[RMDB]
RNA sequence: GGGAACGACUCGAGUAGAGUCGAAAAUGGCAUUCUGUCGACACAUGGAAGAUUGAUUUUAGGUAAGAUGUAUCUCCAGCUAUUGAACGCGGGAAAGCCUUUCUCUUUCCUGCCCCAAAAACUGAUACAUAUGGGUGAGGUUCGCCUCACCCAUAUGAAAAGAAACAACAACAACAAC
Reactivity to 2A3 in 0.01 (KOAc 150mM, MgCl2 10mM, bicine 150mM(pH8.5), 24C), signal-to-noise 1, nucleotides 027 to 126: u030g040g000c010a010u120u000c030u090g050u050c050g010a030c010a000c000a100u060g080g010a080a070g050a070u030u110g090a060u030u100u140u210a070g090g000u060a010a070g010a100u050g040u110a030u000c020u010c060c010a010g040c040u040a050u110u130g030a140a040c060g020c020g000g000g000a000a000a000g000c000c000u060u210u000c030u000c000u010u000u000c000c010u000g050c000c000c000c000a090a080a010a010a050c100u040g000a040u020a190
Reactivity to DMS in 0.01 (KOAc 150mM, MgCl2 10mM, bicine 150mM(pH8.5), 24C), signal-to-noise 2, nucleotides 027 to 126: u000g030g000c010a080u000u000c030u000g030u000c030g000a170c120a070c100a070u010g000g010a100a090g000a050u020u000g000a070u020u000u000u000a090g000g000u010a040a070g000a090u010g010u000a080u000c000u000c000c040a040g010c110u010a140u000u010g020a060a080c160g010c030g000g000g010a040a010a030g030c240c040u000u010u000c100u000c020u000u000u000c000c000u000g010c010c020c020c010a060a050a030a110a040c140u000g000a170u000a170
The record gives the reactivity of an RNA of 177 nucleotides to 2A3 and DMS. High DMS reactivity at an A or C suggests that its Watson-Crick edge is free. The DMS profile rests on 1,214 reads. For DMS the reverse transcriptase was MarathonRT. The RNA was probed in 150 mM KOAc, 10 mM MgCl2 and 150 mM bicine (pH 8.5) at 24 C.